RNA sequence: GGGAACGACUCGAGUAGAGUCGAAAACUCUGGUGAGACCCUAUCUAGUAUAGCAAUCCACCAAGCAGGUGAUUUCACACAAUUCAGGUUCUCAAAGAAAAUGCGCCCUGACUUGACAGGUAUGGUCAAUACCAGCCCAUUUCGAUGGGCUGGUAUUAAAAGAAACAACAACAACAAC
Reactivity to DMS in 0.01 (KOAc 150mM, MgCl2 10mM, bicine 150mM(pH8.5), 24C), signal-to-noise 4, nucleotides 027 to 126: c020u000c060u000g010g000u000g000a130g000a070c190c210c010u000a010u010c040u030a130g000u030a040u010a040g000c120a080a090u010c070c010a050c050c010a070a100g000c150a120g020g030u010g010a090u010u000u060c020a100c110a200c140a040a090u020u020c030a020g000g030u010u010c020u010c030a040a050a140g010a110a040a040a060u010g030c070g010c300c000c000u000g000a100c030u020u020g000a060c040a070g000g050u010a020u020g020g000u010c030
Reactivity to 2A3 in 0.01 (KOAc 150mM, MgCl2 10mM, bicine 150mM(pH8.5), 24C), signal-to-noise 4, nucleotides 027 to 126: c010u000c040u040g010g000u040g050a080g000a020c000c010c000u000a020u000c000u020a050g060u070a040u040a110g020c030a030a030u080c070c010a030c010c020a040a030g090c100a040g020g040u020g020a100u010u100u100c070a050c010a000c010a060a040u060u040c020a030g010g050u070u030c030u010c000a130a150a010g140a030a100a020a020u090g020c000g050c020c000c020u030g040a060c030u070u060g010a030c010a060g000g050u070a060u120g040g030u010c000